[RMDB]
RNA sequence: GGGAACGACUCGAGUAGAGUCGAAAAGCGCGGCGGGAACGGCACGCUGGCGCCGAGGGAGUCGCGCACCUCCUGGGGCAUGCCGGCCAUCAUCGGUGUCUCGAAGAUGCCCGGGGCGAUGGUCAUACCUACGCCCUCCUUUCGAGGAGGGCGUAGGAAAAGAAACAACAACAACAAC
Reactivity to DMS in 0.01 (KOAc 150mM, MgCl2 10mM, bicine 150mM(pH8.5), 24C), signal-to-noise 1, nucleotides 027 to 126: g020c000g030c000g010g000c030g040g000g040a180a120c020g000g030c030a040c040g010c170u000g060g010c070g000c000c010g000a100g000g000g020a100g000u000c010g030c050g030c020a050c110c030u010c020c000u000g020g070g030g010c210a120u000g030c060c100g010g020c040c020a000u010c020a090u000c060g020g000u010g010u000c090u000c110g020a120a060g030a060u000g020c200c000c050g060g000g020g020c030g000a030u010g010g000u000c050a080u000a200
Reactivity to 2A3 in 0.01 (KOAc 150mM, MgCl2 10mM, bicine 150mM(pH8.5), 24C), signal-to-noise 1, nucleotides 027 to 126: g000c000g000c000g040g000c030g030g040g080a120a010c000g010g060c000a000c040g220c120u190g150g100c100g000c000c010g020a010g030g080g060a070g000u040c000g000c030g000c000a000c020c010u050c000c030u070g040g000g010g000c100a080u080g070c040c000g060g000c060c000a050u050c000a010u070c000g000g040u050g060u050c030u080c080g060a100a030g030a040u020g030c000c040c040g000g010g000g040c110g020a020u050g020g030u050c010a040u120a150

Notes: This 177-nucleotide RNA was probed chemically with DMS and 2A3. The RNA was probed in 150 mM KOAc, 10 mM MgCl2 and 150 mM bicine (pH 8.5) at 24 C. It was measured as part of the RMDB library OK2TST.